[RMDB]
RNA sequence: GGGAACGACUCGAGUAGAGUCGAAAAACUCUUUGGUGAGCGGAACUAGCACUAUGUCCAACUUCUUGUGACCCCCGGAGCUGUUGCCAUUACCACUUGUAGGGGGUGGCACAAUGUACAGCCCGCGCUGGUGGGCUAAUUUCGAUUAGCCCACCAGAAAAGAAACAACAACAACAAC
Reactivity to DMS in 0.01 (KOAc 150mM, MgCl2 10mM, bicine 150mM(pH8.5), 24C), signal-to-noise 2, nucleotides 027 to 126: a090c020u000c040u010u010u020g040g000u010g010a070g000c050g000g010a050a070c080u010a100g010c070a060c050u000a120u000g010u020c040c010a060a110c090u000u000c030u000u010g010u010g010a180c010c000c020c010c000g020g000a090g040c050u000g010u010u010g010c030c020a030u000u010a070c010c010a060c090u000u030g000u020a130g000g020g010g010g010u000g000g020c030a090c290a080a050u000g020u000a050c010a020g000c010c010c020g010c190g020
Reactivity to 2A3 in 0.01 (KOAc 150mM, MgCl2 10mM, bicine 150mM(pH8.5), 24C), signal-to-noise 2, nucleotides 027 to 126: a000c040u020c020u060u060u110g110g010u080g000a080g040c000g010g020a060a020c000u010a070g050c030a020c030u060a070u170g050u000c010c020a020a060c030u110u080c020u140u120g130u150g280a300c010c010c050c020c020g030g000a100g000c000u030g080u160u040g020c000c000a010u030u040a140c030c010a070c050u090u100g050u190a090g020g020g010g040g000u000g020g000c010a050c050a080a150u120g020u090a020c000a010g020c030c020c000g000c030g000